[RMDB]
RNA sequence: GGGAACGACUCGAGUAGAGUCGAAAAUCGUUUAUGUGCGACAUGAACGCAGUGGAUACUGUCCUACAGUAUCCAGAUGGCUUCUGUAGAACAGAGGCCAGAGCUAAUCUGUCGCACAGAUUAGCGAGGACAGCUCUGUAUUCGUACAGAGCUGUCCAAAAGAAACAACAACAACAAC
Reactivity to 2A3 in 0.01 (KOAc 150mM, MgCl2 10mM, bicine 150mM(pH8.5), 24C), signal-to-noise 1, nucleotides 027 to 126: u030c010g000u000u000u030a030u010g010u000g010c000g000a010c000a020u190g010a030a030c060g000c020a020g050u010g000g000a010u000a000c000u000g030u100c000c070u060a030c000a020g000u010a000u000c000c000a000g020a040u010g010g000c000u000u020c000u000g030u020a070g070a290a040c000a000g000a000g000g000c020c000a000g000a010g000c010u010a040a050u010c010u010g000u000c000g000c010a000c000a000g000a020u090u070a000g000c010g010a020
Reactivity to DMS in 0.01 (KOAc 150mM, MgCl2 10mM, bicine 150mM(pH8.5), 24C), signal-to-noise 2, nucleotides 027 to 126: u000c010g000u000u000u000a020u010g000u030g010c020g000a010c000a010u040g020a040a110c180g000c060a300g010u000g020g000a000u000a000c000u000g010u010c170c140u060a090c000a000g010u000a000u000c000c000a040g020a070u000g010g000c000u000u000c000u000g010u000a130g000a050a300c010a010g000a000g000g010c020c000a010g000a090g020c010u010a100a120u000c080u000g000u000c010g020c010a040c000a010g000a070u010u000a020g010c010g010a090